[RMDB]
The record gives the reactivity of an RNA of 177 nucleotides to 2A3 and DMS. For DMS the reverse transcriptase was MarathonRT. The 2A3 profile rests on 1,136 reads. For 2A3 the reverse transcriptase was SuperScript II with manganese. Values cover nucleotides 27 to 126. The reactions ran in a buffer of 150 mM KOAc, 10 mM MgCl2 and 150 mM bicine (pH 8.5), at 24 C.

RNA sequence: GGGAACGACUCGAGUAGAGUCGAAAAGGGUCGAGUCAGGGUCGCCUCCUCGAGCUCUGAGUUUUCCAUCAAGCGGAGCCAGACUGAAAGCUAGGUGCAUUUCCCUGGAGAUAUAGGGAACAGAGGGCGAAAAGUACCUCUUCGGAGGUACUUUUCGAAAAGAAACAACAACAACAAC
Reactivity to 2A3 in 0.01 (KOAc 150mM, MgCl2 10mM, bicine 150mM(pH8.5), 24C), signal-to-noise 2, nucleotides 027 to 126: g070g000g030u060c040g020a020g050u070c020a040g000g000g060u060c040g030c030c000u010c040c000u030c010g050a050g000c010u000c000u010g070a070g070u120u070u070u020c010c010a080u080c050a040a080g130c000g080g020a000g000c000c000a080g030a100c000u080g000a210a000a010g000c050u040a030g010g000u020g070c020a100u000u040u020c000c000c000u010g000g100a080g020a020u150a010u160a060g020g000g020a040a000c030a020g050a060g010g000g030
Reactivity to DMS in 0.01 (KOAc 150mM, MgCl2 10mM, bicine 150mM(pH8.5), 24C), signal-to-noise 3, nucleotides 027 to 126: g000g000g030u000c050g000a090g010u000c080a060g000g000g010u030c070g000c010c010u000c190c010u000c040g000a160g040c050u000c040u000g000a110g010u030u010u030u040c000c010a110u010c190a110a100g010c080g000g010a050g000c050c010a090g000a060c070u010g010a070a070a080g010c060u010a040g000g010u000g000c130a090u010u010u000c000c030c010u000g000g050a110g010a110u060a080u020a110g000g000g000a020a070c180a040g020a140g000g010g000